RNA sequence: GGGAACGACUCGAGUAGAGUCGAAAAGUGAAUAUUCAGUGCCACAGGGUUAAACCUCGGUACAGAAGCGAGACCCUGCUGGGCAGAGAAAGGGUGACCUGGAAGGUGUGUGAGGGCCCCGCCCAUGCUUCUAUACGCAAUUCGUUGCGUAUAGAAGAAAAGAAACAACAACAACAAC
Reactivity to DMS in 0.01 (KOAc 150mM, MgCl2 10mM, bicine 150mM(pH8.5), 24C), signal-to-noise 7, nucleotides 027 to 126: g020u000g000a110a120u010a100u000u010c040a110g020u000g020c000c010a130c040a020g000g000g000u000u000a030a150a140c020c020u000c030g010g020u010a090c220a130g000a030a030g010c020g010a300g000a030c010c000c000u010g010c230u010g010g010g010c010a050g000a120g000a060a060a070g000g000g010u010g000a090c040c030u000g000g010a100a070g000g010u000g020u000g010u000g010a150g000g010g000c010c010c020c050g010c010c000c010a110u010g010
Reactivity to 2A3 in 0.01 (KOAc 150mM, MgCl2 10mM, bicine 150mM(pH8.5), 24C), signal-to-noise 4, nucleotides 027 to 126: g050u040g040a070a030u090a130u230u070c050a020g100u020g080c020c010a010c010a010g050g020g020u060u120a080a110a070c020c010u020c020g060g070u200a110c070a160g110a040a020g060c020g000a030g010a050c000c000c000u010g010c070u070g040g040g000c010a020g020a000g000a030a040a010g030g000g020u030g040a120c000c010u020g060g070a090a040g080g020u090g010u030g040u030g090a060g020g010g000c000c000c000c030g010c000c000c000a030u110g020